RNA sequence: GGGAACGACUCGAGUAGAGUCGAAAAGAUAUGGACGCCUGCUUGGACCGAGACAUCGGAAACGAUGUUCUCGCUAGCAGGCGUCCUAAGUCAAAGGAUUUAGGGUAGUUCGCUACCCUAAAUCCAACGGUAUAUUAACCUUCGGGUUAAUAUACCGAAAAGAAACAACAACAACAAC
Reactivity to 2A3 in 0.01 (KOAc 150mM, MgCl2 10mM, bicine 150mM(pH8.5), 24C), signal-to-noise 2, nucleotides 027 to 126: g020a000u030a020u050g000g000a010c030g010c020c010u020g020c070u140u160g120g130a300c110c050g000a010g010a000c000a020u010c020g000g020a040a010a000c020g010a000u000g080u260u020c000u000c000g040c000u000a000g010c020a000g000g010c000g000u010c000c000u000a000a010g000u000c000a010a000a090g000g000a000u000u000u000a010g000g000g000u000a010g050u050u120c300g060c100u000a000c000c000c000u000a000a010a000u000c000c010a000a000
Reactivity to DMS in 0.01 (KOAc 150mM, MgCl2 10mM, bicine 150mM(pH8.5), 24C), signal-to-noise 4, nucleotides 027 to 126: g000a030u000a200u010g000g000a000c000g000c000c000u000g010c010u000u010g030g010a130c300c010g000a010g000a030c000a000u000c010g000g000a030a030a110c000g010a010u000g000u010u010c000u000c000g010c030u000a020g020c010a010g000g010c000g010u010c000c000u000a000a070g000u010c010a110a140a160g000g000a010u000u000u000a010g000g000g010u000a010g000u000u010c250g010c000u000a000c000c000c000u000a000a000a000u000c000c000a010a030